[RMDB]
Chemical mapping of a 207-nucleotide RNA with DMS and 2A3. It was measured as part of the RMDB library OK3TST.
RNA sequence: GGGAACGACUCGAGUAGAGUCGAAAAGUGCCGCUGCUUGCAAUGAGGCCGGUGGAAAACUUGGAAUCGGGCCGUAACCCAACGUAGGUCUGGCGAAUUGAGAUGGCAGCCUGACCGAUGGCAGCUCGAGAUUCGGUGCCCAGGGUCGCGAUUGCGAGCCUUUGAGCUGAUUCGUCAGCUCAAAGGCAAAAGAAACAACAACAACAAC
Reactivity to DMS in 0.01 (KOAc 150mM, MgCl2 10mM, bicine 150mM(pH8.5), 24C), signal-to-noise 1, nucleotides 027 to 156: g020u000g020c020c010g090c010u000g040c020u000u000g000c040a090a150u000g000a150g050g030c070c050g080g000u040g010g000a070a080a080a020c080u010u020g090g000a040a120u010c010g020g000g020c000c040g050u000a010a150c030c000c050a100a190c080g050u000a100g020g020u010c020u010g030g040c060g010a090a240u000u010g020a120g050a210u010g000g000c050a180g010c010c010u000g030a030c000c030g020a020u030g040g020c040a130g070c010u000c010g010a030g000a240u000u010c020g060g040u000g010c080c000c050a160g000g010g000u000c020g000c000g000a180u000u000g010c010g010a180
Reactivity to 2A3 in 0.01 (KOAc 150mM, MgCl2 10mM, bicine 150mM(pH8.5), 24C), signal-to-noise 3, nucleotides 027 to 156: g040u020g100c020c010g030c040u070g020c000u020u060g040c040a060a100u140g030a120g070g010c010c040g020g020u120g050g030a060a120a000a030c070u130u190g030g050a050a050u070c030g000g010g000c020c020g040u070a090a110c020c000c010a020a000c090g040u060a020g020g020u030c020u010g000g000c020g030a260a190u150u170g050a110g070a160u150g110g000c030a010g000c000c010u010g000a010c000c000g010a040u020g030g030c010a000g010c010u000c010g110a090g030a140u100u060c010g000g050u060g030c000c000c000a040g050g000g010u040c010g010c040g130a130u090u220g020c000g010a010